[RMDB]
RNA sequence: GGGAACGACUCGAGUAGAGUCGAAAAAUAACGAUAUUCAAUCUUGUCUCUGUUCGCCCUCUUGUAAUAACAGUUCCUGAUGGAAGAACAGAUCCAGAUAGGAGCCCCAAUGAUGACAAGUGGCUGCGGAGAAGAGUCCAUUCGUGGACUCUUCUCCAAAAGAAACAACAACAACAAC
Reactivity to 2A3 in 0.01 (KOAc 150mM, MgCl2 10mM, bicine 150mM(pH8.5), 24C), signal-to-noise 1, nucleotides 027 to 126: a040u180a100a040c060g060a090u060a010u150u150c040a090a000u050c100u100u030g000u080c000u000c040u140g050u150u100c050g030c000c000c000u000c000u030u000g000u010a190a160u040a230a050c110a180g080u050u000c000c000u000g080a000u050g000g050a120a150g000a170a070c100a040g110a000u000c000c000a000g000a000u080a000g000g050a000g010c010c010c000c010a080a110u200g150a090u180g030a000c000a040a040g040u010g060g000c010u100g000c000